This 177-nucleotide RNA was probed chemically with DMS. For DMS, 2,042 sequencing reads were counted.
RNA sequence: GGGAACGACUCGAGUAGAGUCGAAAAAAGGGCCCAGAGGGGAAUGAGCCUCGUCGUCGACGAAGGGGUGCAUUCCGAAGAGCUGGCCUGGCGUCGUCCGGCUCCCUCGACCGCACCGGAGCGCUAGCGGAGGAGGGGACUUCGGUCCCCUCCUCCGAAAAGAAACAACAACAACAAC
Reactivity to DMS in 0.01 (KOAc 150mM, MgCl2 10mM, bicine 150mM(pH8.5), 24C), signal-to-noise 2, nucleotides 027 to 126: a070a100g000g000g010c090c060c050a060g010a090g000g010g010g020a020a010u000g010a270g000c020c010u000c010g010u000c000g010u000c250g020a150c050g000a030a030g000g000g000g000u020g010c010a020u000u010c000c000g010a100a090g010a140g000c020u000g010g000c040c010u000g010g000c010g010u010c090g010u000c000c000g000g000c250u000c010c010c000u010c100g000a090c120c110g020c130a090c030c010g010g010a060g000c040g000c030u000a160g020